[RMDB]
An RNA of 207 nucleotides, treated with DMS and 2A3 and read out base by base. For 2A3, 1,252 sequencing reads were counted. The DMS profile rests on 2,327 reads. Conditions: 150 mM KOAc, 10 mM MgCl2 and 150 mM bicine (pH 8.5), 24 C.

RNA sequence: GGGAACGACUCGAGUAGAGUCGAAAAAUGAACCUAUGGUACGAGCACUUAUCGAAACGUUGUAUAUACCUCCUAUAGAGGUCCCUAAGAACGAGGAGACUCGAACAGAAGAUCCCAUGUUCUACAUUUUCGAGGAAAGUCCCAAACGUGAGAGAGGUGUAUUGACGAAGUUCGCUUCGUCAAUACAAAAAGAAACAACAACAACAAC
Reactivity to DMS in 0.01 (KOAc 150mM, MgCl2 10mM, bicine 150mM(pH8.5), 24C), signal-to-noise 2, nucleotides 027 to 156: a080u010g010a050a160c030c040u030a060u000g010g030u000a050c070g020a090g050c030a080c050u000u000a040u000c000g050a090a060a090c130g000u000u000g020u020a130u000a120u000a070c030c010u000c010c000u000a170u010a120g000a070g060g000u000c050c020c110u020a050a070g000a070a090c030g000a090g010g010a140g030a090c000u020c020g020a040a100c080a050g010a100a040g000a130u000c040c020c020a050u000g030u000u010c040u000a040c080a160u010u000u000u010c020g010a070g000g010a110a070a130g000u000c010c020c020a080a030a110c070g030u010g000a150g000a090g010a080g010g050
Reactivity to 2A3 in 0.01 (KOAc 150mM, MgCl2 10mM, bicine 150mM(pH8.5), 24C), signal-to-noise 3, nucleotides 027 to 156: a000u090g010a030a020c000c030u040a110u090g050g000u070a060c060g000a030g030c060a020c120u120u070a060u160c040g010a070a060a070c050g010u030u030g160u080a110u000a020u060a140c000c000u020c030c030u120a140u140a190g010a010g000g010u030c020c020c000u100a120a050g010a070a010c040g040a050g030g020a070g060a050c000u000c020g020a080a040c030a050g140a150a000g020a090u030c020c020c020a000u110g020u010u020c020u020a020c010a120u100u100u020u090c030g030a030g030g040a100a030a040g070u080c000c010c050a020a100a000c040g010u100g030a050g010a000g020a030g010g050